Source: RMDB library OK1LIB, as collected in RNAgym. Structure probing data (2A3) for a 177-nucleotide construct.

RNA sequence: GGGAACGACUCGAGUAGAGUCGAAAAACCAGCGUGGUUUAAGGCUUCAAAUGCCAUACCGGCUGUAAUGGCACCAUCACCAAUAACACUGACUAUUUUGCGAUUCUCUUGCUCUUUUUCAGCACAGAAGUUCGGAUGGCUUCGGCCAUCCGAACUUAAAAGAAACAACAACAACAAC
Reactivity to 2A3 in 0.01 (KOAc 150mM, MgCl2 10mM, bicine 150mM(pH8.5), 24C), signal-to-noise 1, nucleotides 027 to 126: a010c000c000a000g010c090g030u260g040g030u010u010u010a140a040g000g060c000u080u060c180a240a260a180u200g000c010c000a000u000a050c000c000g000g110c020u000g000u010a000a300u000g000g000c070a000c020c080a000u020c000a000c000c000a050a000u120a160a000c110a050c090u040g060a050c010u000a100u150u290u070u020g000c020g090a070u200u000c010u000c000u090u030g000c000u000c000u130u000u000u050u050c030a030g000c000a110c000a150g290
The RNA was probed in 150 mM KOAc, 10 mM MgCl2 and 150 mM bicine (pH 8.5) at 24 C.